This 177-nucleotide RNA was probed chemically with 2A3 and DMS. 2A3 is a SHAPE reagent: it acylates the 2'-hydroxyl of flexible nucleotides of all four kinds. For DMS, 1,738 sequencing reads were counted. For DMS the reverse transcriptase was MarathonRT. For 2A3 the reverse transcriptase was SuperScript II with manganese.

RNA sequence: GGGAACGACUCGAGUAGAGUCGAAAACAGAUGCCGUUCGCGGCAUCUGAAAGUGACGGUGUAAAAUGGCCAAGGUGCCAGCUACCACCGACACAGGGCGCAAAAGAGGAUUCUUCGGAAUCCUCAACAUCAGCUGAUUGUUCGCAAUCAGCUGAUGAAAAGAAACAACAACAACAAC
Reactivity to 2A3 in 0.01 (KOAc 150mM, MgCl2 10mM, bicine 150mM(pH8.5), 24C), signal-to-noise 2, nucleotides 027 to 126: c000a010g000a000u000g000c000c000g030u060u060c260g000c030g070g000c000a010u030c000u000g000a050a020a010g000u010g020a020c000g040g040u010g000u030a100a150a070a070u050g000g000c010c130a240a300g220g100u300g000c010c000a000g000c000u020a010c010c030a010c010c020g010a000c010a000c000a020g050g040g010c150g000c080a100a110a050a000g010a010g020g000a010u010u010c030u000u040c190g030g000a030a000u000c000c000u010c000a000a000
Reactivity to DMS in 0.01 (KOAc 150mM, MgCl2 10mM, bicine 150mM(pH8.5), 24C), signal-to-noise 2, nucleotides 027 to 126: c020a000g000a000u000g030c000c010g010u000u020c210g020c000g040g010c000a010u000c000u010g000a060a030a120g000u000g010a120c010g000g010u000g000u010a030a080a150a110u010g000g000c000c020a160a180g020g020u000g030c000c000a000g000c040u000a150c300c000a010c000c000g010a080c000a060c000a100g050g000g000c120g000c160a050a040a100a100g000a000g010g020a000u000u000c030u000u000c190g020g000a010a000u000c000c000u000c010a040a100

The reactions ran in a buffer of 150 mM KOAc, 10 mM MgCl2 and 150 mM bicine (pH 8.5), at 24 C.